[RMDB]
RNA sequence: GGGAACGACUCGAGUAGAGUCGAAAAGCUCAAGAGAGGAUCCGCGGCAGAGGCUCAGAUAGACAAAAAGCAGGUUGGAAGACGAACCGAGAGGUGAUGCCACCGGUCGCGUCUCACUCGAAGAGCCCCUAAAUAUACUGUUCGCAGUAUAUUUAGGAAAAGAAACAACAACAACAAC
Reactivity to DMS in 0.01 (KOAc 150mM, MgCl2 10mM, bicine 150mM(pH8.5), 24C), signal-to-noise 4, nucleotides 027 to 126: g010c010u010c010a080a220g010a170g010a140g030g000a060u000c110c030g030c030g010g020c010a080g010a160g000g000c020u000c040a080g010a100u000a090g010a120c140a040a050a060a120a110g010c090a070g010g010u000u000g010g010a090a080g010a100c110g000a080a050c020c010g010a150g010a140g020g010u000g010a090u000g000c020c020a070c060c020g010g020u000c010g010c010g000u000c070u000c010a070c010u000c020g000a160a080g010a060g010c030c080
Reactivity to 2A3 in 0.01 (KOAc 150mM, MgCl2 10mM, bicine 150mM(pH8.5), 24C), signal-to-noise 4, nucleotides 027 to 126: g000c010u000c060a070a020g040a000g010a010g120g000a020u030c040c000g020c000g000g010c030a030g040a020g130g000c000u010c010a020g070a240u150a050g160a070c090a060a150a020a030a040g060c090a030g010g040u080u060g090g070a130a060g110a100c080g040a020a010c010c010g040a030g000a010g070g060u050g010a040u210g010c020c020a030c040c030g010g000u010c010g000c010g020u000c000u010c010a140c000u000c000g020a070a040g000a010g010c010c030
An RNA of 177 nucleotides, treated with DMS and 2A3 and read out base by base. In probing experiments dimethyl sulfate is read out at A N1 and C N3, which are open when not base-paired. 2A3 adducts were read by reverse transcription with SuperScript II with manganese. The data come from the RNA Mapping Database (RMDB), library VIROID.